[RMDB]
RNA sequence: GGGAACGACUCGAGUAGAGUCGAAAAUUCAAGCGAUUCGUCGCUUGAACCUGAGGAGACUCAAGCAAAAUUGUUCCCUUUUGCUUUUGCUUACCUCUUUUAAGUAGUAGUGCUUCGGCACUACUAACCAAUUCUCUUCUUUCGAGAAGAGAAUUGGAAAAGAAACAACAACAACAAC
Reactivity to 2A3 in 0.01 (KOAc 150mM, MgCl2 10mM, bicine 150mM(pH8.5), 24C), signal-to-noise 2, nucleotides 027 to 126: u050u000c000a000a010g010c000g020a000u030u110c220g050u010c010g160c000u000u000g000a010a000c010c000u020g010a000g010g020a030g050a120c000u010c010a010a010g000c000a010a010a070a070u240u300g020u010u010c000c000c000u000u000u000u010g000c000u000u020u010u020g000c010u040u110a280c000c000u060c000u080u140u070u110a140a070g030u070a010g000u000a000g010u020g010c000u040u060c230g090g000c000a000c000u000a000c000u000a000a000
Reactivity to DMS in 0.01 (KOAc 150mM, MgCl2 10mM, bicine 150mM(pH8.5), 24C), signal-to-noise 3, nucleotides 027 to 126: u000u000c010a010a000g000c010g010a020u000u010c200g020u000c000g010c000u010u000g000a010a070c020c010u010g000a010g010g000a270g010a120c000u000c050a010a000g000c000a010a000a010a020u010u010g000u010u000c000c000c010u000u000u000u000g000c000u000u000u000u000g010c040u000u010a110c000c010u000c000u000u020u010u010a080a170g020u000a000g010u000a000g010u000g020c010u000u010c210g030g010c000a000c000u000a000c000u000a020a120